[RMDB]
RNA sequence: GGGAACGACUCGAGUAGAGUCGAAAAUAAUAUGCAUAUCGAGUUCCCAUGUAUUAUCGUAGCCCUGCGGCUGUAACAUUACAGCUUAGUAAGAAUGCUACCUAACGAUAGCUAGCCGCAGGAUUAAAUAGAACGGUGUAUUCGUACACCGUUCUAUAAAAGAAACAACAACAACAAC
Reactivity to DMS in 0.01 (KOAc 150mM, MgCl2 10mM, bicine 150mM(pH8.5), 24C), signal-to-noise 3, nucleotides 027 to 126: u010a120a080u000a070u000g000c070a070u000a110u020c090g020a190g000u000u000c000c000c000a130u000g010u010a050u010u010a030u000c100g010u020a060g010c100c000c010u000g040c000g010g030c000u000g040u000a080a120c150a070u000u000a020c040a100g000c250u010u010a100g010u000a020a020g000a080a070u010g010c010u000a030c030c030u000a120a110c200g000a060u000a020g020c010u000a040g010c000c010g010c000a020g000g010a030u000u010a060a100
Reactivity to 2A3 in 0.01 (KOAc 150mM, MgCl2 10mM, bicine 150mM(pH8.5), 24C), signal-to-noise 1, nucleotides 027 to 126: u110a000a010u070a070u130g030c090a030u070a060u300c080g000a040g080u030u040c000c000c030a000u000g020u000a180u120u120a080u140c120g060u040a030g030c000c000c000u000g000c010g010g050c030u080g070u050a080a050c070a180u000u080a000c000a000g090c050u080u020a080g000u000a040a030g050a060a010u080g060c000u020a010c040c040u120a100a020c040g070a140u010a060g000c000u030a010g000c010c000g020c000a000g000g050a010u030u000a010a000